[RMDB]
RNA sequence: GGGAACGACUCGAGUAGAGUCGAAAAGGUGGUUACGCAUUUUUGCGUUCGAGGAUUUUUCCUUCUACGUUUGCUGAUUGGAACAGUUAGGUAGUUCCUCGUUCCUAGUUUUUUCUAGGUUCACCGAGGGUUUUGCGUACUUCGGUACGCAGGACCCAAAAGAAACAACAACAACAAC
Reactivity to 2A3 in 0.01 (KOAc 150mM, MgCl2 10mM, bicine 150mM(pH8.5), 24C), signal-to-noise 9, nucleotides 027 to 126: g030g010u030g010g060u140u100a010c010g020c020a120u080u050u100u230u240g000c000g000u010u020c000g000a000g010g020a030u070u030u010u050u060c010c000u020u030c020u030a040c050g090u030u060u090g120c040u050g060a290u210u250g110g060a150a050c010a020g030u090u060a030g010g030u010a000g020u010u010c000c000u000c000g010u020u030c000c000u010a060g020u000u110u110u030u060u040c000u000a000g000g000u020u040c010a010c010c010g010a150
Reactivity to DMS in 0.01 (KOAc 150mM, MgCl2 10mM, bicine 150mM(pH8.5), 24C), signal-to-noise 8, nucleotides 027 to 126: g000g020u000g010g010u020u030a020c010g010c010a050u020u020u030u020u010g010c010g010u000u000c020g000a010g000g000a010u000u010u000u010u000c000c000u010u010c030u000a030c030g010u020u010u010g010c020u000g000a190u030u050g020g030a120a140c020a020g010u010u010a030g000g000u000a010g010u010u000c000c000u000c010g010u020u020c000c000u000a010g010u000u030u020u020u030u010c000u000a020g000g010u000u010c020a030c010c010g010a140